[RMDB]
RNA sequence: GGGAACGACUCGAGUAGAGUCGAAAAGAAUUGGUAUGUAAGCUACUUCUUCCAGUAGCUACGUCAUAACAUCAAGGUUAUGCAUACUGAGCCGAAGCUCAGCUUCGGUCCUCCAAGGAAGACCAAAUACAGCUCAGCCCGUUCGCGGGCUGAGCAACCAUUGAAGGUUGUUCGCAACCUUCAAUGGAAAAGAAACAACAACAACAAC
Reactivity to 2A3 in 0.01 (KOAc 150mM, MgCl2 10mM, bicine 150mM(pH8.5), 24C), signal-to-noise 2, nucleotides 027 to 156: g050a020a150u080u080g010g000u010a000u010g010u030a060a000g000c000u000a010c000u070u090c020u020u000c020c000a020g000u000a000g000c020u020a050c020g050u040c000a000u020a020a020c020a070u200c190a160a050g190g000u000u020a000u020g020c010a000u040a040c000u040g000a000g020c020c000g000a000a000g000c010u040c300a030g000c000u000u010c000g000g000u000c000c040u060c060c040a030a040g000g000a020a000g000a010c040c090a000a050a080u190a170c120a020g000c000u000c000a000g000c010c010c000g040u100u140c210g010c040g080g010g010c000u000g000a000g000c000a000a000